[RMDB]
RNA sequence: GGGAACGACUCGAGUAGAGUCGAAAAAGCCUGGUCGAUACGUCGACCAGGCAAUGCCGCCACAACGGCUUCCUGGCGUGGCGGAUCUGAUCCAAUGGAGCAACGCUCCGGAUACGUCCGGAGCGAAAAAAGCUCUGCUUCUUCGGAAGCAGAGCAAGGUACCAUAUACGUUCGCGUAUAUGGUACCAAAAGAAACAACAACAACAAC
Reactivity to 2A3 in 0.01 (KOAc 150mM, MgCl2 10mM, bicine 150mM(pH8.5), 24C), signal-to-noise 1, nucleotides 027 to 156: a000g290c000c000u000g010g000u010c010g000a030u010a070c190g050u040c000g010a010c010c020a000g020g000c000a000a000u010g000c000c010g000c000c000a010c000a020a070c020g070g000c000u160u140c000c000u000g020g000c040g000u010g010g000c010g000g000a000u060c070u080g000a020u040c020c070a060a160u200g000g000a010g010c010a080a000c000g000c010u000c000c000g000g000a020u030a030c120g020u000c000c010g000g000a000g000c030g000a000a000a000a000a000a000g000c000u000c000u000g000c000u000u000c010u030u050c070g100g010a000a000g000c000a020g000a000g000c000a000a020

The record gives the reactivity of an RNA of 207 nucleotides to 2A3.
Source: RMDB library M2RFPK, as collected in RNAgym.
For 2A3 the reverse transcriptase was SuperScript II with manganese.
The 2A3 profile rests on 1,032 reads.
The reactions ran in a buffer of 150 mM KOAc, 10 mM MgCl2 and 150 mM bicine (pH 8.5), at 24 C.